RNA sequence: GGGAACGACUCGAGUAGAGUCGAAAAGACUCGCCGCCCAAGCCCGAGCAUGGGCCCCAGUUCCGAACGAAGAGACCGCCGGGGAAGGGGGGCGAACCGACGGGAGUUCAAUGGUAAAGAGGCGAAGGAGCCCCCUCGUUCGCGAGGGGGAAAAGAAACAACAACAACAAC
Reactivity to DMS in 0.01 (KOAc 150mM, MgCl2 10mM, bicine 150mM(pH8.5), 24C), signal-to-noise 3, nucleotides 027 to 129: g000a090c080u020c080g030c130c090g000c000c010c000a150a170g030c010c020c070g000a170g070c190a130u110g070g000g050c010c010c000c020a080g000u030u040c090c080g050a090a100c130g020a050a010g000a080g030a060c050c070g030c000c010g020g010g020g030a090a140g150g030g000g010g020g020c070g030a000a000c000c000g020a070c110g000g040g030a000g000u000u000c030a120a150u060g010g040u000a050a070a030g050a070g000g020c040g010a000a000g000g000a120g020
The record gives the reactivity of an RNA of 170 nucleotides to DMS. The data come from the RNA Mapping Database (RMDB), library 15KLIB. The RNA was probed in 150 mM KOAc, 10 mM MgCl2 and 150 mM bicine (pH 8.5) at 24 C.